The record gives the reactivity of an RNA of 177 nucleotides to DMS and 2A3. The DMS profile rests on 1,787 reads. DMS (dimethyl sulfate) methylates the pairing face of unpaired adenines and cytosines.
[RMDB]
RNA sequence: GGGAACGACUCGAGUAGAGUCGAAAAGAUAUGGAUCCCUGGUUUGCCGCAUUCGGAAACGAAUGGCGGUUUCGAAACCUGGGAUCCUAAGUCAAACGCUAAUAUCAUGUUCGCAUGAUAUUAGCGAGGUCACUAUGUGGUUCGCCACAUAGUGACCAAAAGAAACAACAACAACAAC
Reactivity to DMS in 0.01 (KOAc 150mM, MgCl2 10mM, bicine 150mM(pH8.5), 24C), signal-to-noise 1, nucleotides 027 to 126: g000a010u000a070u020g010g000a020u000c000c000c010u000g000g010u000u000u000g030c000c010g000c010a030u000u000c000g030g000a010a030a040c000g000a010a000u000g040g040c000g030g010u000u010u010c200g040a030a000a010c000c000u000g000g030g000a010u000c000c000u010a000a040g000u000c020a100a110a290c030g010c000u000a000a000u000a000u000c000a010u000g000u000u020c300g020c040a010u000g000a010u000a020u000u000a010g040c000g000a000
Reactivity to 2A3 in 0.01 (KOAc 150mM, MgCl2 10mM, bicine 150mM(pH8.5), 24C), signal-to-noise 2, nucleotides 027 to 126: g000a000u020a010u100g020g000a010u010c020c000c010u020g080g120u040u080u300g000c020c010g040c010a010u030u000c020g010g000a030a020a020c030g000a000a020u070g300g170c070g010g000u020u040u140c120g130a040a000a000c000c010u010g000g010g000a000u000c000c000u000a030a010g010u000c030a190a000a080c040g000c020u000a010a000u000a010u000c000a000u000g060u160u150c300g010c210a000u020g000a030u020a000u010u000a000g000c000g000a010